[RMDB]
Structure probing data (DMS and 2A3) for a 177-nucleotide construct. The RNA was probed in 150 mM KOAc, 10 mM MgCl2 and 150 mM bicine (pH 8.5) at 24 C. Values cover nucleotides 27 to 126. The DMS profile rests on 8,281 reads.
RNA sequence: GGGAACGACUCGAGUAGAGUCGAAAAGAUAUGGAUCCAGGCGACGAUCGUACUGGUCGGAAACGACCAGGUACGGGAGCCUGGUCCUAAGUCAAAAGAUGAUAAUCUCUUCGGAGAUUAUCAUCAAGACAUUAUAGCUGUUCGCAGCUAUAAUGUCAAAAGAAACAACAACAACAAC
Reactivity to DMS in 0.01 (KOAc 150mM, MgCl2 10mM, bicine 150mM(pH8.5), 24C), signal-to-noise 5, nucleotides 027 to 126: g000a020u000a230u000g000g000a020u010c030c000a000g010g010c000g020a060c180g000a070u010c000g010u000a040c000u000g000g010u000c000g010g000a050a070a090c010g000a010c000c010a010g010g010u000a000c010g020g000g010a100g010c000c000u000g000g010u000c000c010u000a010a130g000u000c020a100a070a110a150g010a010u000g000a010u000a010a010u000c000u000c000u000u010c200g020g010a010g000a010u000u000a000u010c000a000u000c000a060a090
Reactivity to 2A3 in 0.01 (KOAc 150mM, MgCl2 10mM, bicine 150mM(pH8.5), 24C), signal-to-noise 5, nucleotides 027 to 126: g020a020u050a030u130g020g000a030u140c080c010a010g010g010c020g060a300c040g030a160u210c010g020u000a010c000u010g010g000u000c000g010g000a060a070a020c000g000a000c000c000a010g030g080u020a000c010g010g060g010a000g000c000c010u000g000g000u000c000c000u000a050a020g030u010c020a020a030a020a220g000a000u000g000a000u010a010a010u000c010u010c000u060u200c300g040g000a000g000a000u000u000a000u000c000a000u000c000a000a000